An RNA of 207 nucleotides, treated with DMS and 2A3 and read out base by base. The 2A3 profile rests on 3,785 reads. Values cover nucleotides 27 to 156.

[RMDB]
RNA sequence: GGGAACGACUCGAGUAGAGUCGAAAAGAUAUGGAAACGCGAGGAUCGAUAUACCAACCGUGACUACCCACCUAUGAUCGGAAACGAUCAUAGAGGUCACGCAAGGGUAUCGGGAGCGUUUCCUAAGUCAAAACUCCCCUUCUUCGGAAGGGGAGAAACGUGCAUAGAGAUUCGUCUCUAUGCACGUAAAAGAAACAACAACAACAAC
Reactivity to DMS in 0.01 (KOAc 150mM, MgCl2 10mM, bicine 150mM(pH8.5), 24C), signal-to-noise 2, nucleotides 027 to 156: g000a170u030a220u010g000g000a010a000a010c010g070c000g000a140g030g020a080u000c020g010a040u000a010u000a220c000c010a020a300c300c020g010u000g040a060c000u000a010c000c000c000a300c240c010u000a000u000g000a000u030c010g020g000a270a080a290c000g020a030u000c000a010u000a000g020a120g000g010u000c000a010c000g000c050a070a300g000g020g030u000a020u000c040g030g030g000a130g000c010g020u000u010u020c000c010u000a000a060g030u020c010a080a130a150a190c000u000c000c000c000c000u000u000c000u000u000c300g060g000a010a050g040g000g030g000a010g000a000a040
Reactivity to 2A3 in 0.01 (KOAc 150mM, MgCl2 10mM, bicine 150mM(pH8.5), 24C), signal-to-noise 3, nucleotides 027 to 156: g020a020u070a020u160g010g000a000a010a000c010g030c000g040a240g050g020a040u030c010g000a000u010a000u050a300c020c000a020a000c010c010g000u000g010a000c020u080a080c050c070c040a030c000c000u000a000u000g000a000u000c000g010g040a070a030a050c010g000a000u000c000a000u000a000g000a000g000g000u000c000a000c010g010c010a030a100g000g000g030u000a000u000c000g000g000g000a010g000c000g000u000u000u000c000c000u000a010a010g000u000c020a000a040a060a130c000u020c010c000c010c000u010u000c000u010u030c190g130g000a000a000g000g000g000g000a000g000a000a000
The RNA was probed in 150 mM KOAc, 10 mM MgCl2 and 150 mM bicine (pH 8.5) at 24 C.